[RMDB]
Record summary
An RNA of 177 nucleotides, treated with DMS and 2A3 and read out base by base. For 2A3 the reverse transcriptase was SuperScript II with manganese. The 2A3 profile rests on 3,462 reads. It was measured as part of the RMDB library TTRDEL.
RNA sequence: GGGAACGACUCGAGUAGAGUCGAAAAGAUAUGGACGCGAUAAGUACGAAGAGCGAUGAAAUCGGAAACGAUGGAGCUCUAGUACUUUUGACGCGUCCUAAGUCAAAGGUGGACUUCGGUCCACCAACCAUCACUAAGGCUUCGGCCUUAGUGAUGGAAAAGAAACAACAACAACAAC
Reactivity to DMS in 0.01 (KOAc 150mM, MgCl2 10mM, bicine 150mM(pH8.5), 24C), signal-to-noise 2, nucleotides 027 to 126: g010a010u000a300u000g000g000a020c000g030c020g020a080u000a000a010g030u000a000c000g020a110a120g020a000g020c010g000a040u000g000a060a100a020u000c000g000g000a170a090a170c020g010a030u000g020g000a040g010c010u010c000u000a270g020u000a000c000u020u000u000u000g000a110c090g000c000g030u000c000c000u000a000a030g000u000c040a030a060a100g000g060u000g010g000a010c000u000u000c200g010g020u000c000c000a000c000c000a010a040
Reactivity to 2A3 in 0.01 (KOAc 150mM, MgCl2 10mM, bicine 150mM(pH8.5), 24C), signal-to-noise 2, nucleotides 027 to 126: g020a010u070a010u150g000g010a010c020g000c020g030a030u010a070a020g000u020a000c010g070a170a150g010a030g030c020g060a200u060g030a060a040a010u020c000g040g000a090a040a030c020g010a000u020g030g030a010g030c000u000c000u000a000g000u010a000c000u020u030u010u020g060a040c010g000c010g000u000c000c000u000a030a020g000u000c020a010a150a060g000g000u000g000g000a020c000u040u140c300g080g000u000c000c000a000c000c000a000a000